[RMDB]
RNA sequence: GGGAACGACUCGAGUAGAGUCGAAAAGAAUGGAAAGGGAUUGUAGAGAUCAGUGUCGCAGCAUUCUCAAUUAGAUUGUAUAUGGUUACGUGCGACAGAUAAGGCCGGGCUUCUCUGGUGCGAAGAAGGGUUUAUUUAUCUUCGGAUAAAUAAACCCAAAAGAAACAACAACAACAAC
Reactivity to DMS in 0.01 (KOAc 150mM, MgCl2 10mM, bicine 150mM(pH8.5), 24C), signal-to-noise 4, nucleotides 027 to 126: g010a080a060u010g010g010a050a040a100g000g000g000a070u010u030g010u010a060g010a110g000a040u000c050a090g000u010g030u010c000g010c010a060g000c040a050u000u010c060u010c060a060a070u030u050a060g000a300u000u000g000u010a050u020a120u000g000g000u020u030a030c150g000u000g000c000g000a030c000a020g000a080u020a060a060g000g010c010c030g000g000g000c070u000u010c010u010c020u000g000g000u000g000c050g010a070a090g000a080a100
Reactivity to 2A3 in 0.01 (KOAc 150mM, MgCl2 10mM, bicine 150mM(pH8.5), 24C), signal-to-noise 3, nucleotides 027 to 126: g010a020a000u070g000g080a050a010a060g020g020g020a060u020u050g040u060a050g020a020g020a060u070c040a060g120u010g000u040c010g000c020a000g020c000a040u160u020c070u020c060a090a190u120u110a080g080a150u000u130g040u060a080u030a040u160g090g020u150u100a050c040g050u050g010c000g020a020c020a000g050a040u080a010a000g040g000c050c000g000g010g000c060u060u000c020u000c000u030g030g000u080g000c010g030a030a010g080a060a120

Chemical mapping of a 177-nucleotide RNA with DMS and 2A3. Source: RMDB library OK1LIB, as collected in RNAgym. The RNA was probed in 150 mM KOAc, 10 mM MgCl2 and 150 mM bicine (pH 8.5) at 24 C. For DMS, 8,380 sequencing reads were counted.